[RMDB]
Overview:
The data come from the RNA Mapping Database (RMDB), library OK2TRN. The record gives the reactivity of an RNA of 177 nucleotides to 2A3 and DMS. The RNA was probed in 150 mM KOAc, 10 mM MgCl2 and 150 mM bicine (pH 8.5) at 24 C.

RNA sequence: GGGAACGACUCGAGUAGAGUCGAAAAGUCUAGCGAUUUAGGGAUCCGAUCCGGGUCGCAGAACUCAACUGCAUGAGUACACACGCAAGUCGCGUAUUGGCCGACCGGCCAAGGAUCUGCUAGACGAAAUCAUAGUAGGUUUCGACCUACUAUGAUUAAAAGAAACAACAACAACAAC
Reactivity to 2A3 in 0.01 (KOAc 150mM, MgCl2 10mM, bicine 150mM(pH8.5), 24C), signal-to-noise 9, nucleotides 027 to 126: g000u000c000u000a000g000c020g100a140u070u140u300a200g070g040g010a010u000c000c010g010a030u010c020c020g070g030g050u100c050g000c020a010g040a060a030c030u030c080a040a110c060u160g040c090a120u090g020a020g080u110a050c040a000c000a000c040g010c040a120a170g270u270c080g020c020g010u020a090u090u170g070g000c040c010g020a030c010c000g000g000c020c040a030a030g000g000a000u000c040u090g000c000u000a000g000a000c000g000a020
Reactivity to DMS in 0.01 (KOAc 150mM, MgCl2 10mM, bicine 150mM(pH8.5), 24C), signal-to-noise 9, nucleotides 027 to 126: g010u000c000u000a010g020c010g010a130u010u010u010a150g020g000g000a020u000c010c010g000a240u010c030c050g010g020g010u000c050g020c050a090g010a080a060c060u000c080a060a110c110u010g000c180a130u000g010a070g020u000a100c120a100c300a030c020g010c050a070a140g010u010c130g010c030g010u000a100u000u000g010g010c090c010g010a140c050c050g000g000c110c070a040a150g000g000a010u000c000u000g020c000u000a010g000a020c010g010a050
For 2A3 the reverse transcriptase was SuperScript II with manganese.